[RMDB]
RNA sequence: GGGAACGACUCGAGUAGAGUCGAAAAUAUACUCAAACGGUCAAGAAAGGACAUCCUAGGCGGUUUCGGUGAAUUAAGUAUAGCUAAGGAACUCCGCAGAUCGGUCUUUCCCGAUCACCUGAUCGGUGUCCUUAAGAACGGUCUUCCGGACUUUACGCGUAGCAUGCGGUUUCGACCGCAUGCUACGAAAAGAAACAACAACAACAAC
Reactivity to 2A3 in 0.01 (KOAc 150mM, MgCl2 10mM, bicine 150mM(pH8.5), 24C), signal-to-noise 1, nucleotides 027 to 156: u200a020u020a060c060u060c080a000a060a060c170g090g000u010c020a100a030g030a140a010a040g020g000a020c000a040u020c030c050u120a060g050g000c040g060g000u040u050u070c010g030g020u020g070a120a070u120u120a110a100g050u020a000u240a300g060c000u010a070a070g020g000a040a030c020u000c030c020g060c150a000g000a020u010c000g000g070u000c000u000u040u070c010c000c000g020a020u010c000a030c120c080u140g050a070u170c030g000g000u000g000u080c000c040u000u050a030a010g030a070a040c000g010g020u020c000u190u040c040c000g040g000a020c020u040u170u090a130c140g010
The data come from the RNA Mapping Database (RMDB), library OK3TST. Structure probing data (2A3) for a 207-nucleotide construct. For 2A3, 540 sequencing reads were counted. 2A3 adducts were read by reverse transcription with SuperScript II with manganese.